Description:
Structure probing data (DMS and 2A3) for a 177-nucleotide construct. It was measured as part of the RMDB library M2PK90. For 2A3 the reverse transcriptase was SuperScript II with manganese.
[RMDB]
RNA sequence: GGGAACGACUCGAGUAGAGUCGAAAAAAAAAUAACUAGCAUGCAUAAGACGAGGUAGAGCGCGCGCUCUACCAAAAGAUGUGUGUAAAAGCGCACGUGAAGGCGCGCAUACACGAAUAAACAAAAACACUAUUUUCUAGUUCGCUAGAAAAUAGUGAAAAGAAACAACAACAACAAC
Reactivity to DMS in 0.01 (KOAc 150mM, MgCl2 10mM, bicine 150mM(pH8.5), 24C), signal-to-noise 3, nucleotides 027 to 126: a040a070a070a040a110u010a060a050c080u010a130g000c010a030u000g000c030a040u000a060a030g010a120c170g030a230g020g000u000a000g020a030g020c000g040c300g010c260g000c020u000c000u000a010c000c010a010a010a040a080g010a080u000g030u000g020u010g000u010a000a020a060a110g000c010g000c000a010c010g020u000g030a170a150g020g000c030g020c000g020c100a110u000a010c050a030c070g010a100a050u000a040a030a010c030a030a040a090a020a040
Reactivity to 2A3 in 0.01 (KOAc 150mM, MgCl2 10mM, bicine 150mM(pH8.5), 24C), signal-to-noise 2, nucleotides 027 to 126: a000a000a010a000a010u090a010a030c020u020a020g030c010a010u040g000c000a030u040a160a080g080a080c070g030a040g010g000u000a000g030a010g020c090g010c030g010c070g010c190u000c000u000a000c000c000a000a010a000a000g000a030u050g040u020g010u000g000u060a010a110a080a090g000c000g030c010a020c090g110u150g150a130a040g050g010c030g000c000g000c030a020u060a110c040a010c050g050a070a070u210a120a070a010c020a020a060a010a030a000